[RMDB]
RNA sequence: GGGAACGACUCGAGUAGAGUCGAAAAUGGGCGAUCGCUCGCUGUUUUUGUAGCUGGCUUUCAGCGGGCUGGAGGAGCCGGGAGCGGAGGCGGAGGACCGAGCCAAAAACGUCAGCCGAGGCCGGGCAAUAUCGUGGACUGUUCGCAGUCCACGAAACUUACAUGCUUGGUUCGCCAAGCAUGUAAGAAAAGAAACAACAACAACAAC
Reactivity to 2A3 in 0.01 (KOAc 150mM, MgCl2 10mM, bicine 150mM(pH8.5), 24C), signal-to-noise 1, nucleotides 027 to 156: u030g010g000g030c040g030a080u070c050g000c030u050c010g020c000u020g120u060u050u070u090u140g110u050a040g000c050u050g120g010c010u010u120u100c020a020g000c030g010g010g000c060u050g090g000a040g020g040a010g040c070c030g030g000g010a050g010c050g010g070a020g000g020c020g000g020a040g000g010a000c010c040g000a030g010c000c000a090a020a000a060a040c020g070u050c050a020g020c000c020g000a050g000g000c020c000g000g010g000c000a020a040u050a050u230c000g040u010g000g010a000c000u000g000u020u040c180g000c110a000g000u030c000c000a000c000g010a000a000a000